The data come from the RNA Mapping Database (RMDB), library OK1LIB. This 177-nucleotide RNA was probed chemically with 2A3 and DMS. The RNA was probed in 150 mM KOAc, 10 mM MgCl2 and 150 mM bicine (pH 8.5) at 24 C. For DMS the reverse transcriptase was MarathonRT. 2A3 adducts were read by reverse transcription with SuperScript II with manganese.

RNA sequence: GGGAACGACUCGAGUAGAGUCGAAAAAUAUGUCAGUGGUCCCUGUAAGAGGAUCUAGGACAUAGGGAGGGUGGGUCAGAGCGCGGAUGCCCUAGAUCACGCGCGCGAGAAGUUAUGGGAACCACAACACUUAUUGAUCGUUCGCGGUUGGUGGGUGAAAAGAAACAACAACAACAAC
Reactivity to 2A3 in 0.01 (KOAc 150mM, MgCl2 10mM, bicine 150mM(pH8.5), 24C), signal-to-noise 5, nucleotides 027 to 126: a000u070a020u040g040u010c020a000g020u000g010g000u000c010c000c000u010g060u070a070a020g050a060g050g000a000u000c000u010a010g030g000a010c030a010u020a010g010g060g050a220g060g060g180u250g020g020g000u020c030a020g010a010g050c060g000c030g020g000a000u020g010c010c000c000u010a020g000a010u020c010a030c060g020c000g000c000g000c030g030a070g040a130a030g050u080u120a030u070g010g010g010a030a020c010c010a020c010a030a010
Reactivity to DMS in 0.01 (KOAc 150mM, MgCl2 10mM, bicine 150mM(pH8.5), 24C), signal-to-noise 9, nucleotides 027 to 126: a070u010a030u010g010u000c080a160g020u010g000g000u000c010c000c010u000g020u020a060a070g010a150g010g000a030u010c000u000a090g010g000a030c040a020u010a070g000g000g000a130g000g000g000u060g000g000g000u000c130a060g000a050g000c060g000c060g000g000a050u010g010c030c010c010u000a060g000a030u010c010a100c060g010c040g010c050g000c080g010a110g010a080a080g010u010u010a040u010g000g000g000a140a060c040c030a020c060a070a070